[RMDB]
RNA sequence: GGGAACGACUCGAGUAGAGUCGAAAAGGGGUCGUUGUGAGAGGCGUAGGCUUUUGACGAGCUGAAGCCUCCACGGCUCGAUAAGCCUACGAACUACCUCUCGACAACGACGGAGGCACCCAAAACGAUAUGGCAGAGUUCGCUCUGCCAUAUCGAACAUUUUGUAUUGCUUCGGCAAUACAAAAUGAAAAGAAACAACAACAACAAC
Reactivity to DMS in 0.01 (KOAc 150mM, MgCl2 10mM, bicine 150mM(pH8.5), 24C), signal-to-noise 1, nucleotides 027 to 156: g030g010g060g040u010c010g040u010u000g060u000g020a070g010a010g030g000c010g040u000a030g000g030c020u000u000u020u000g020a160c160g030a020g000c000u000g010a040a160g000c040c010u010c000c050a210c010g010g000c010u010c000g010a210u000a050a030g010c000c010u000a070c070g020a100a260c040u000a100c000c000u000c010u000c000g010a070c000a020a040c030g010a050c040g040g030a070g060g020c040a100c000c020c040a020a090a090a210c000g020a030u000a000u000g010g000c010a040g020a040g000u010u050c300g000c000u010c000u020g000c000c010a000u010a000u020c000g000a010a160
Reactivity to 2A3 in 0.01 (KOAc 150mM, MgCl2 10mM, bicine 150mM(pH8.5), 24C), signal-to-noise 1, nucleotides 027 to 156: g040g000g010g020u020c000g000u000u010g010u010g000a010g010a000g000g000c000g000u000a000g000g020c060u160u120u140u250g150a080c040g000a000g000c020u040g030a070a020g020c000c010u000c010c010a010c000g000g010c000u000c000g010a070u070a260a060g000c000c000u000a010c000g010a030a050c030u110a040c100c000u000c000u010c010g020a020c010a010a000c000g000a000c000g000g000a010g000g000c010a040c000c010c000a050a070a020a000c000g000a000u000a000u000g000g000c020a000g010a030g020u060u130c190g100c130u010c010u000g000c000c000a000u000a000u020c000g000a010a000
The data come from the RNA Mapping Database (RMDB), library RNAMAK. This 207-nucleotide RNA was probed chemically with DMS and 2A3. For DMS the reverse transcriptase was MarathonRT. For 2A3 the reverse transcriptase was SuperScript II with manganese.